[RMDB]
RNA sequence: GGGAACGACUCGAGUAGAGUCGAAAAUUCUCUUGAAGGCAAGUCAGAUUUUCUUGCUUCUUGGAGUAGUGAAUAAUCAAGAUUGCAGCACUGACAUUGUAAAGAAAUGUUAGAUUCUCUUAUACCCCAGGAAUUGCUAUUUCGAUAGCAAUUCCUGAAAAGAAACAACAACAACAAC
Reactivity to DMS in 0.01 (KOAc 150mM, MgCl2 10mM, bicine 150mM(pH8.5), 24C), signal-to-noise 2, nucleotides 027 to 126: u000u010c020u000c020u000u000g030a110a080g000g000c020a030a030g000u010c110a220g020a090u000u000u000u000c020u010u000g020c000u000u000c020u030u000g000g000a070g030u010a060g020u000g010a030a050u000a040a050u000c060a050a070g020a080u010u010g020c060a080g000c230a180c010u000g010a000c010a040u010u010g000u000a070a080a130g000a040a030a010u010g010u000u000a030g000a160u000u010c030u000c050u000u010a100u010a160c070c040c070
Reactivity to 2A3 in 0.01 (KOAc 150mM, MgCl2 10mM, bicine 150mM(pH8.5), 24C), signal-to-noise 1, nucleotides 027 to 126: u010u020c000u000c000u000u040g080a040a030g090g010c000a000a020g000u080c040a060g030a230u070u100u040u040c000u000u050g000c000u000u000c010u070u100g040g010a040g030u050a030g110u030g190a090a040u090a090a030u110c030a010a050g020a040u030u140g040c090a030g010c010a030c100u000g020a010c020a070u030u080g030u120a070a130a070g060a050a030a000u020g020u010u030a050g010a260u040u000c000u000c000u100u100a140u060a230c010c000c000